[RMDB]
RNA sequence: GGGAACGACUCGAGUAGAGUCGAAAAGAGCUGAAGUACAGCAAGAACGACGAAAUCCUUGGCAAAGCGUCGAAGAUAAGCGUGCCGAAUGCCAAGGAUUAACGGCACGCGAGGCGAAGACGCCAGACAUCAUCACUGGCUUCGGCCAGUGAUGAUGAAAAGAAACAACAACAACAAC
Reactivity to DMS in 0.01 (KOAc 150mM, MgCl2 10mM, bicine 150mM(pH8.5), 24C), signal-to-noise 1, nucleotides 027 to 126: g050a110g000c000u000g000a140a160g020u020a150c050a050g100c010a180a110g000a070a100c080g000a030c020g000a100a020a090u000c000c000u000u000g010g000c000a110a100a140g000c190g000u000c020g000a130a260g000a070u020a050a190g000c000g010u000g010c030c000g000a080a100u000g000c020c000a000a100g000g000a000u020u000a020a090c100g050g000c010a110c000g000c000g000a020g000g040c030g000a260a050g020a080c050g000c000c140a060g000a160
Reactivity to 2A3 in 0.01 (KOAc 150mM, MgCl2 10mM, bicine 150mM(pH8.5), 24C), signal-to-noise 3, nucleotides 027 to 126: g140a030g020c020u060g030a110a030g090u170a220c010a000g000c040a020a020g070a080a010c090g110a000c010g020a030a150a020u000c000c000u000u000g000g000c050a160a170a040g010c040g130u090c030g080a060a020g000a140u150a140a000g000c000g070u050g000c000c000g000a080a060u070g010c010c000a010a000g030g000a000u000u000a000a000c030g000g000c000a000c000g010c000g000a060g020g000c020g030a100a080g120a050c020g000c000c000a040g060a060